Structure probing data (2A3) for a 207-nucleotide construct.
For 2A3, 600 sequencing reads were counted.
The reactions ran in a buffer of 150 mM KOAc, 10 mM MgCl2 and 150 mM bicine (pH 8.5), at 24 C.
RNA sequence: GGGAACGACUCGAGUAGAGUCGAAAACUCCCAUCCAACUCCUAUUCCAACACGUCCUCGUAGUACAGAGUGGUAACAUGUGUCACCACAUAUCCAAGCUUGGGUACACGGGCUUGACCCAACCCCUAAAACAGAGACGAGUUCGCUCGUCUCUGAACUCCUAGCAUACCUUCGGGUAUGCUAGGAGAAAAGAAACAACAACAACAAC
Reactivity to 2A3 in 0.01 (KOAc 150mM, MgCl2 10mM, bicine 150mM(pH8.5), 24C), signal-to-noise 1, nucleotides 027 to 156: c000u030c000c000c000a020u080c090c040a030a040c030u020c000c020u050a050u050u080c030c000a030a000c060a060c060g040u040c000c020u070c030g130u050a030g030u050a030c070a110g020a020g030u010g020g050u090a090a000c010a140u070g180u080g050u240c030a010c020c000a030c000a070u010a060u100c000c000a060a030g030c050u070u080g030g000g080u020a010c030a030c030g040g050g000c040u140u210g110a150c000c000c000a010a010c010c000c000c000u080a000a000a000a150c010a000g010a000g000a000c000g000a000g000u000u060c140g020c020u000c000g000u000c000u000c000u000g000a000a000